[RMDB]
RNA sequence: GGGAACGACUCGAGUAGAGUCGAAAAGAGAUGCAGGUCGAGAGGGAGUCCACUCUCGUAAAUCUAGGCUCAAAAAAAUAGAUGCAAACAACAUCGUACCUUUCGCUCGUAAAACUGCACCUGUUGCAGCAUAAAACACCUCUAAUUCAGGUUCGAGGUCCUUCAAUAAGUUCGCUUAUUGAAGGACAAAAGAAACAACAACAACAAC
Reactivity to 2A3 in 0.01 (KOAc 150mM, MgCl2 10mM, bicine 150mM(pH8.5), 24C), signal-to-noise 4, nucleotides 027 to 156: g050a010g000a010u070g000c010a010g050g040u100c020g000a000g000a010g020g100g000a020g030u000c020c040a070c030u000c000u000c010g070u080a020a030a020u030c010u030a010g010g000c010u000c000a080a100a020a000a000a020a000u230a030g020a020u040g030c060a130a070a070c010a060a050c000a050u040c020g050u060a070c010c000u080u130u110c120g020c040u030c020g030u060a070a060a060a040c010u070g000c000a010c010c090u100g060u170u030g010c010a020g000c020a020u080a070a080a030a010c050a030c010c010u030c040u060a070a070u130u100c060a030g000g040u020u060c010g020a020g070
Reactivity to DMS in 0.01 (KOAc 150mM, MgCl2 10mM, bicine 150mM(pH8.5), 24C), signal-to-noise 1, nucleotides 027 to 156: g010a110g020a010u000g030c000a050g010g050u000c000g000a030g030a000g010g000g000a060g050u000c050c040a050c030u000c010u010c000g000u010a010a050a090u010c010u000a090g000g040c000u010c010a000a000a040a090a050a170a300u010a080g000a000u000g000c030a110a110a080c080a080a050c010a010u010c020g070u010a110c070c050u000u000u000c040g050c020u000c040g000u000a070a080a030a040c000u040g000c020a040c060c110u000g000u010u010g060c010a050g040c010a090u010a030a100a050a070c070a040c000c010u000c040u000a120a190u010u000c070a020g000g000u000u000c030g010a090g030